[RMDB]
RNA sequence: GGGAACGACUCGAGUAGAGUCGAAAAAAGGUGCCAUCAUAUCGGUUAAGAACUCUUAACUCUGAUGGCUUUCGAGUUAUGUGGUGCAUAGAAGCUCUCCCUUCAAAUGGUCGUACAGUUCCGUGAAGUACGUGUGUAAGUUCGCUUACACACGUACAAAAGAAACAACAACAACAAC
Reactivity to DMS in 0.01 (KOAc 150mM, MgCl2 10mM, bicine 150mM(pH8.5), 24C), signal-to-noise 3, nucleotides 027 to 126: a060a070g020g020u010g000c000c000a010u000c010a050u000a110u000c250g010g010u000u000a010a020g000a240a140c300u020c020u000u000a010a010c000u000c090u000g010a010u010g000g000c020u000u000u010c010g020a070g010u000u000a020u000g010u000g010g010u000g010c030a050u000a050g010a070a100g020c060u000c050u000c020c020c010u000u010c080a030a080a100u010g010g000u010c030g000u000a060c090a090g000u010u010c010c020g030u010g000a090a140
Reactivity to 2A3 in 0.01 (KOAc 150mM, MgCl2 10mM, bicine 150mM(pH8.5), 24C), signal-to-noise 2, nucleotides 027 to 126: a000a000g100g030u040g020c040c000a010u020c000a010u080a060u220c060g030g020u000u000a020a040g030a260a230c040u010c000u300u000a010a000c000u000c030u130g010a010u000g000g000c000u000u020u010c010g010a000g000u100u050a070u160g080u060g000g030u040g040c000a040u020a090g100a090a020g050c010u030c000u000c020c020c000u000u010c010a070a080a080u060g030g000u020c010g000u030a040c010a040g010u050u000c030c030g040u060g020a070a030

Structure probing data (DMS and 2A3) for a 177-nucleotide construct. It was measured as part of the RMDB library M2PK90. For 2A3 the reverse transcriptase was SuperScript II with manganese. Conditions: 150 mM KOAc, 10 mM MgCl2 and 150 mM bicine (pH 8.5), 24 C. For 2A3, 2,564 sequencing reads were counted.